[RMDB]
RNA sequence: GGGAACGACUCGAGUAGAGUCGAAAACGCGCGAACGUACGCGCGAACGCGCGAAAAAGCGCAUGCGCGAAAAAGGCCGGAAAGCCGGCCAGCGCGUUCGAGCGCAUGCGCCGCGUACGGAAGCGCGCACGAGCACUAAUUUCGAUUAGUGCUCGUGAAAAGAAACAACAACAACAAC
Reactivity to 2A3 in 0.01 (KOAc 150mM, MgCl2 10mM, bicine 150mM(pH8.5), 24C), signal-to-noise 3, nucleotides 027 to 126: c010g010c000g010c000g060a100a010c000g000u000a000c000g000c000g000c000g000a000a000c010g020c000g000c010g110a160a050a010a020a010g000c000g010c000a000u010g000c020g000c010g110a090a010a010a060a000g000g000c010c020g020g030a250a140a050g300c000c010g000g000c000c000a020g010c000g000c000g000u010u050c090g210a050g010c010g000c000a000u000g000c000g000c000c000g000c000g000u000a000c000g000g010a080a010g000c000g000c000g000
Reactivity to DMS in 0.01 (KOAc 150mM, MgCl2 10mM, bicine 150mM(pH8.5), 24C), signal-to-noise 2, nucleotides 027 to 126: c040g000c020g070c020g000a280a270c030g000u010a000c000g010c060g030c180g020a020a000c000g000c000g000c090g040a040a020a110a080a060g020c000g030c030a010u000g000c000g000c000g050a040a040a070a140a030g000g020c000c000g000g000a180a250a140g030c030c020g010g000c000c000a000g000c000g000c000g000u010u000c170g030a150g020c020g070c000a010u030g000c000g000c020c000g000c000g030u000a000c030g000g000a130a200g000c040g030c010g000

Structure probing data (2A3 and DMS) for a 177-nucleotide construct. The 2A3 profile rests on 6,080 reads. For DMS the reverse transcriptase was MarathonRT. It was measured as part of the RMDB library OK1LIB. 2A3 adducts were read by reverse transcription with SuperScript II with manganese.